[RMDB]
RNA sequence: GGGAACGACUCGAGUAGAGUCGAAAAGAUAUGGAGCAUCUGCCUCGAUAAGCUGGUGUCGGAAACGACAUACAGCUUUUGACGAGGCUGAUGCUCCUAAGUCAAAAGCAAGGGUUCGCCCUUGCAACGAAACGUACCAGUUCGCUGGUACGUUUCGAAAAGAAACAACAACAACAAC
Reactivity to DMS in 0.01 (KOAc 150mM, MgCl2 10mM, bicine 150mM(pH8.5), 24C), signal-to-noise 2, nucleotides 027 to 126: g000a020u030a300u030g000g000a010g020c000a000u010c020u000g000c010c000u000c000g020a120u010a030a000g050c030u000g010g020u000g020u000c000g010g010a090a080a160c000g000a010c000a000u000a120c000a000g000c000u010u000u000u010g000a180c130g020a020g000g020c000u000g000a010u000g000c000u000c000c010u010a000a040g000u020c000a130a080a180a130g010c000a000a000g030g000g080u000u010c300g020c010c010c000u000u000g010c000a010a040
Reactivity to 2A3 in 0.01 (KOAc 150mM, MgCl2 10mM, bicine 150mM(pH8.5), 24C), signal-to-noise 1, nucleotides 027 to 126: g030a000u090a030u150g010g000a010g000c050a020u020c020u030g040c030c000u000c120g070a120u080a300a000g000c010u010g020g060u000g020u020c010g000g000a040a050a020c000g000a010c030a030u250a160c010a010g000c000u020u030u000u010g040a020c050g000a000g000g020c000u000g000a000u000g030c000u000c000c000u000a010a000g000u010c000a000a010a030a020g000c010a000a000g020g030g000u080u160c280g230c030c010c000u020u020g000c000a010a010